[RMDB]
RNA sequence: GGGAACGACUCGAGUAGAGUCGAAAACAUUUUUUAAAACCAACUGUGAAUGUACAUGGCUUGGAUUUGAAUAUCACCUAAAAGUUCUGUGUAUUUGGGAAAAUUAUUUAAUCUUCCUGUGCCUCGGUUUCCUCAUCUGUAAAAUGGGGAUGAUAGAGAUAUUUACCCUAUUCGUAGGGUAAAUAUCAAAAGAAACAACAACAACAAC
Reactivity to 2A3 in 0.01 (KOAc 150mM, MgCl2 10mM, bicine 150mM(pH8.5), 24C), signal-to-noise 2, nucleotides 027 to 156: c020a060u100u080u010u010u090u240a050a070a020a020c040c000a030a020c090u080g020u060g110a170a300u150g040u080a020c020a060u090g050g000c070u060u110g060g010a060u080u030u060g000a030a010u070a060u090c050a010c020c000u040a050a030a090a140g080u090u070c050u130g040u050g070u100a120u050u070u070g070g000g010a010a010a080a110u110u060a090u050u180u110a130a090u020c040u040u000c010c010u010g000u010g020c000c010u030c030g000g060u020u160u000c020c000u040c000a050u020c050u060g100u250a020a030a040a110u000g030g000g000g010a010u010g010a000u020a040g050a020
Reactivity to DMS in 0.01 (KOAc 150mM, MgCl2 10mM, bicine 150mM(pH8.5), 24C), signal-to-noise 1, nucleotides 027 to 156: c050a030u000u000u000u000u000u000a050a020a100a190c020c020a070a060c010u010g010u020g020a140a210u000g030u000a100c020a020u000g020g050c100u030u010g040g000a090u000u000u010g020a140a040u010a090u000c050a180c050c020u000a040a070a110a220g020u000u000c050u010g030u000g010u010a020u000u010u020g000g030g020a030a020a040a040u010u000a100u000u000u010a030a040u000c020u010u010c010c010u010g030u000g020c020c040u000c020g030g010u010u000u000c010c000u000c000a000u000c010u000g010u000a080a050a100a030u000g020g000g020g010a040u010g020a110u000a100g040a300
The record gives the reactivity of an RNA of 207 nucleotides to 2A3 and DMS. Conditions: 150 mM KOAc, 10 mM MgCl2 and 150 mM bicine (pH 8.5), 24 C. The DMS profile rests on 2,163 reads. For DMS the reverse transcriptase was MarathonRT. 2A3 adducts were read by reverse transcription with SuperScript II with manganese.